[RMDB]
RNA sequence: GGGAACGACUCGAGUAGAGUCGAAAAGAUAUGGAGAUACCUAAAGACUCUCUGGCAAGGGAGCUCAUGAUCGGAAACGAUCAGAGCGACGAUCUUGACCAGAGAGUCUUUAGGUAUCUCCUAAGUCGAACCAAGUAAACUUCGGUUUACUUGGUUCAAAAGAAACAACAACAACAAC
Reactivity to DMS in 0.01 (KOAc 150mM, MgCl2 10mM, bicine 150mM(pH8.5), 24C), signal-to-noise 1, nucleotides 027 to 126: g010a110u000a300u000g000g000a010g000a040u000a000c000c000u010a000a000a020g000a010c000u000c000u000c000u010g000g020c000a020a000g010g000g000a030g030c000u000c010a110u020g020a010u000c000g000g020a160a140a210c000g030a020u010c010a030g000a020g000c010g000a060c300g000a020u010c000u000u000g000a200c010c000a000g020a010g000a000g000u000c000u000u010u000a010g000g030u000a000u000c000u000c000c000u000a000a050g010u010c130